[RMDB]
RNA sequence: GGGAACGACUCGAGUAGAGUCGAAAAUUGCAGGCGGAGAAUAUCGCCGUGCCGAUGGACGUGCAUUCACGCACGGUUCUGUCAUCGCAACCUGACAGGAUCACCCUGUCGAAGAAUGCGCGCGAUAGCGGUGAAAAUAGUUCGCUAUUUUCACCGCAAAAGAAACAACAACAACAAC
Reactivity to DMS in 0.01 (KOAc 150mM, MgCl2 10mM, bicine 150mM(pH8.5), 24C), signal-to-noise 8, nucleotides 027 to 126: u010u010g020c040a180g010g010c020g020g000a110g000a140a130u010a080u010c030g020c020c020g010u000g010c030c170g000a070u000g010g010a120c010g010u000g000c000a070u010u010c110a140c110g000c010a030c150g010g000u000u000c020u000g000u000c010a040u010c120g010c150a060a140c160c110u000g010a000c000a000g010g000a130u000c160a130c160c080c060u000g000u000c010g010a090a050g000a040a050u000g010c010g020c110g010c030g000a080u010a080
Reactivity to 2A3 in 0.01 (KOAc 150mM, MgCl2 10mM, bicine 150mM(pH8.5), 24C), signal-to-noise 5, nucleotides 027 to 126: u090u080g030c020a010g020g000c040g060g060a110g110a270a110u180a060u250c020g010c000c010g030u040g010c050c050g090a090u110g070g050a050c030g000u010g000c010a010u050u100c050a020c090g020c010a000c040g000g010u030u010c010u010g040u010c010a030u050c070g030c100a030a050c010c020u010g010a010c010a010g000g000a050u110c030a090c010c020c020u060g050u140c020g010a090a010g030a020a020u050g010c010g000c010g010c010g020a040u100a070